[RMDB]
RNA sequence: GGGAACGACUCGAGUAGAGUCGAAAAGAUAUGGACAUGGUUUCUUUUGACGCGAACAGUAUCGGAAACGAUACGUUCGCGAUAAGAAACGUGUCCUAAGUCAAAAGAUGAGUCUUCGGACUCAUCAGAGUACGACAUAGUUCGCUAUGUCGUACUCAAAAGAAACAACAACAACAAC
Reactivity to 2A3 in 0.01 (KOAc 150mM, MgCl2 10mM, bicine 150mM(pH8.5), 24C), signal-to-noise 6, nucleotides 027 to 126: g020a010u050a020u110g010g000a010c020a010u150g300g040u010u010u070c030u090u230u170u300g300a200c210g010c010g000a010a020c090a180g010u000a000u000c000g030g000a040a030a020c000g000a000u000a000c010g000u000u000c010g000c010g020a000u060a010a010g000a000a000a010c010g010u000g000u000c010c000u000a050a010g030u010c040a060a000a040a250g010a000u010g000a010g010u000c030u050u140c300g180g010a010c000u000c000a000u010c000a000
Reactivity to DMS in 0.01 (KOAc 150mM, MgCl2 10mM, bicine 150mM(pH8.5), 24C), signal-to-noise 4, nucleotides 027 to 126: g000a040u000a300u010g000g000a020c000a010u010g010g030u010u000u010c000u000u000u010u020g020a200c100g010c000g000a000a010c010a120g050u000a000u000c000g010g010a070a070a120c000g010a000u000a020c000g000u000u000c000g030c010g020a010u000a010a010g010a010a000a010c020g020u000g000u000c000c000u000a020a080g000u010c030a110a100a170a150g000a010u000g000a020g000u010c000u000u010c300g030g010a020c010u000c000a000u010c010a050